[RMDB]
RNA sequence: GGGAACGACUCGAGUAGAGUCGAAAAAGCAUAUCAGCUUACGAGCUGAUAUGCAAUCUAUGAUGAUCCUAUCCCGAACCUGAAUUCCUGUUGAAAAACCAUAAUUACGGAUCUGGCUUCUGAGAAAAAACAGUAAUACCUUCGGGUAUUACUGUUUAAAAGAAACAACAACAACAAC
Reactivity to 2A3 in 0.01 (KOAc 150mM, MgCl2 10mM, bicine 150mM(pH8.5), 24C), signal-to-noise 5, nucleotides 027 to 126: a000g020c000a000u000a000u000c010a000g000c000u060u060a060c230g060a020g000c000u000g000a010u000a000u000g000c020a010a000u010c020u030a120u160g130a080u070g020a040u070c000c000u020a080u030c030c010c010g020a040a030c010c000u030g040a060a050u060u050c030c020u030g030u090u070g090a100a040a020a070a090c060c050a070u150a220a070u220u080a070c060g000g000a010u030c020u010g040g010c020u070u020c010u080g040a050g130a050a120a020
Reactivity to DMS in 0.01 (KOAc 150mM, MgCl2 10mM, bicine 150mM(pH8.5), 24C), signal-to-noise 6, nucleotides 027 to 126: a090g000c000a000u000a000u000c000a000g000c000u000u000a150c190g030a030g010c000u000g020a010u000a000u000g000c010a020a010u000c070u020a070u020g000a090u020g000a060u000c020c020u000a120u010c010c020c010g000a080a100c070c040u000g000a100a130u000u000c030c010u000g000u000u000g000a050a060a080a070a110c050c070a040u020a050a070u010u010a060c120g010g000a030u000c030u000g000g010c070u000u010c030u010g010a100g020a000a060a080
This 177-nucleotide RNA was probed chemically with 2A3 and DMS. The reactions ran in a buffer of 150 mM KOAc, 10 mM MgCl2 and 150 mM bicine (pH 8.5), at 24 C. It was measured as part of the RMDB libraries RFM100 and RFMREP. Values cover nucleotides 27 to 126. DMS (dimethyl sulfate) methylates the pairing face of unpaired adenines and cytosines.